[RMDB]
RNA sequence: GGGAACGACUCGAGUAGAGUCGAAAAGGAUCCUAAUGGAAUUGAUUGCGUAACCGAGGUGACAGCGCCAUUACUAUUCUAAUUAGUCUCUGUUAGUCUGGUGGAUCCGAUAAUGCCGCGCUUACGCGCCUAGGUUGACAUUCGUGUCAACCUAGGCAAAAGAAACAACAACAACAAC
Reactivity to DMS in 0.01 (KOAc 150mM, MgCl2 10mM, bicine 150mM(pH8.5), 24C), signal-to-noise 5, nucleotides 027 to 126: g000g010a070u000c010c010u010a080a070u010g000g000a100a080u000u000g000a110u010u000g000c010g010u010a050a070c100c060g000a080g010g010u000g000a100c160a100g000c220g010c050c030a030u010u010a080c080u010a040u000u000c030u000a030a050u010u000a070g020u010c090u010c080u000g010u000u000a030g020u000c040u000g010g020u000g010g000a030u010c040c020g000a080u000a060a080u000g020c030c020g000c050g020c150u010u000a050c110g010c060
Reactivity to 2A3 in 0.01 (KOAc 150mM, MgCl2 10mM, bicine 150mM(pH8.5), 24C), signal-to-noise 1, nucleotides 027 to 126: g030g000a050u030c010c010u070a080a060u140g070g030a020a070u080u090g020a060u100u170g060c010g010u050a030a040c040c020g070a100g020g080u090g050a040c050a050g010c030g000c010c000a010u030u020a060c030u060a060u050u060c020u040a100a140u090u090a100g070u010c030u020c020u130g050u070u020a030g020u000c030u040g000g030u050g000g050a020u010c050c000g000a020u050a100a040u150g040c020c010g030c000g000c040u060u060a030c050g010c000

Notes:
This 177-nucleotide RNA was probed chemically with DMS and 2A3. The RNA was probed in 150 mM KOAc, 10 mM MgCl2 and 150 mM bicine (pH 8.5) at 24 C. For 2A3 the reverse transcriptase was SuperScript II with manganese. The 2A3 profile rests on 5,316 reads. Source: RMDB library OK2TST, as collected in RNAgym. 2A3 is a SHAPE reagent: it acylates the 2'-hydroxyl of flexible nucleotides of all four kinds. DMS adducts were read by reverse transcription with MarathonRT.